An RNA of 177 nucleotides, treated with DMS and 2A3 and read out base by base.
The RNA was probed in 150 mM KOAc, 10 mM MgCl2 and 150 mM bicine (pH 8.5) at 24 C.
[RMDB]
RNA sequence: GGGAACGACUCGAGUAGAGUCGAAAACAAACGACCCCGGCAUCCCAGUUCAGCCACCCUGGUGUUUGGCCACCCGGAUUCAUCAACCCCGCUCAGAUUCCUGUAGCUCAGGCUCCACUCCUACGCGCCUUAUUGCCACGUUCGCGUGGCAAUAAGGAAAAGAAACAACAACAACAAC
Reactivity to DMS in 0.01 (KOAc 150mM, MgCl2 10mM, bicine 150mM(pH8.5), 24C), signal-to-noise 1, nucleotides 027 to 126: c100a030a140a180c090g010a030c000c020c000c020g000g000c060a070u010c000c000c050a060g020u010u020c080a060g000c030c020a060c050c030c040u000g000g050u010g000u000u000u040g010g000c030c070a090c080c020c000g040g000a120u010u030c020a030u040c050a100a100c100c020c000c010g000c000u020c010a070g000a080u020u010c020c000u000g040u020a120g010c090u010c000a040g010g000c040u010c000c010a080c080u000c020c020u040a020c110g000c150g020
Reactivity to 2A3 in 0.01 (KOAc 150mM, MgCl2 10mM, bicine 150mM(pH8.5), 24C), signal-to-noise 4, nucleotides 027 to 126: c030a010a150a040c060g150a150c010c000c000c010g030g000c000a030u040c030c020c000a020g050u080u090c030a040g040c000c000a020c020c020c000u030g030g000u060g060u060u110u090g050g000c010c000a030c000c040c010g030g010a080u100u040c010a060u060c010a080a140c010c000c000c020g010c020u040c040a020g010a100u080u090c010c010u060g080u130a000g010c020u020c060a020g030g020c010u010c000c000a040c020u030c000c010u040a020c030g030c010g050